[RMDB]
RNA sequence: GGGAACGACUCGAGUAGAGUCGAAAAUAAGUUCAAUUGACCAAUUUGAACAGGUUAUUGAGGAAAAUAAAUAUGUUUUUGUAUUAAAACAUAGUGAAACUUGUCCAAUAUCGGCAAAUGCGUACGAAAUCACGCAACUUUUCGAAGUUGCGUGAUUAAAAGAAACAACAACAACAAC
Reactivity to DMS in 0.01 (KOAc 150mM, MgCl2 10mM, bicine 150mM(pH8.5), 24C), signal-to-noise 3, nucleotides 027 to 126: u030a070a150g010u040u000c010a080a030u000u020g020a160c040c030a040a090u000u000u000g000a120a020c040a060g000g010u020u010a090u010u010g010a140g010g020a070a050a100a180u000a080a070a150u000a000u010g000u000u000u000u000u000g020u010a050u040u010a000a000a000a000c010a000u000a020g000u020g000a110a030a030c070u010u000g020u000c020c040a030a040u060a030u010c050g000g000c050a030a010a070u000g010c200g010u000a050c110g000a040
Reactivity to 2A3 in 0.01 (KOAc 150mM, MgCl2 10mM, bicine 150mM(pH8.5), 24C), signal-to-noise 3, nucleotides 027 to 126: u110a010a050g010u060u050c030a060a060u080u110g140a150c030c020a040a000u110u040u020g030a040a010c010a040g030g060u030u010a120u080u200g070a150g120g170a020a150a160a130u300a020a180a040u040a050u000g050u000u000u000u000u000g240u130a160u120u110a140a000a000a000c000a000u030a000g070u050g130a040a060a150c080u000u050g000u020c000c000a070a010u070a010u250c050g030g020c000a030a040a070u200g040c080g050u040a070c000g070a060

An RNA of 177 nucleotides, treated with DMS and 2A3 and read out base by base.
For 2A3 the reverse transcriptase was SuperScript II with manganese.
The RNA was probed in 150 mM KOAc, 10 mM MgCl2 and 150 mM bicine (pH 8.5) at 24 C.